[RMDB]
RNA sequence: GGGAACGACUCGAGUAGAGUCGAAAACGGCGGCGAUGGGUGCGUUGCUGCUCGCCAACCGUGGGGGAGAGCGCGAUUCGCGAACGCGGACGUCCAUCGGCCUCGCCACGGCCGCAGCCGCCGGCACUGAGCUACAUGACUUCGGUCAUGUAGCUCAAAAAGAAACAACAACAACAAC
Reactivity to DMS in 0.01 (KOAc 150mM, MgCl2 10mM, bicine 150mM(pH8.5), 24C), signal-to-noise 1, nucleotides 027 to 126: c020g000g000c050g000g000c030g000a090u030g000g000g050u000g020c070g000u050u000g000c040u150g000c000u000c000g000c010c110a170a100c090c030g020u020g000g000g000g000g030a120g000a040g020c010g000c010g000a160u040u000c180g030c040g000a050a110c300g010c010g000g000a030c040g000u060c050c010a010u000c000g050g000c050c000u000c130g020c060c020a050c180g000g050c040c020g050c110a090g000c000c000g010c000c000g000g000c100a040c070
Reactivity to 2A3 in 0.01 (KOAc 150mM, MgCl2 10mM, bicine 150mM(pH8.5), 24C), signal-to-noise 2, nucleotides 027 to 126: c010g000g000c000g000g000c020g030a050u090g010g130g000u200g000c000g030u040u100g010c050u150g020c000u010c030g010c000c010a000a000c010c000g030u080g010g060g040g070g010a100g000a050g030c040g010c010g080a160u030u040c030g000c020g010a090a020c100g000c030g020g020a010c020g020u010c010c000a050u040c000g020g000c020c000u020c020g000c010c080a020c000g030g020c020c010g060c010a020g030c010c000g000c000c000g000g010c000a070c070
Conditions: 150 mM KOAc, 10 mM MgCl2 and 150 mM bicine (pH 8.5), 24 C. This 177-nucleotide RNA was probed chemically with DMS and 2A3. 2A3 adducts were read by reverse transcription with SuperScript II with manganese. For DMS, 1,550 sequencing reads were counted.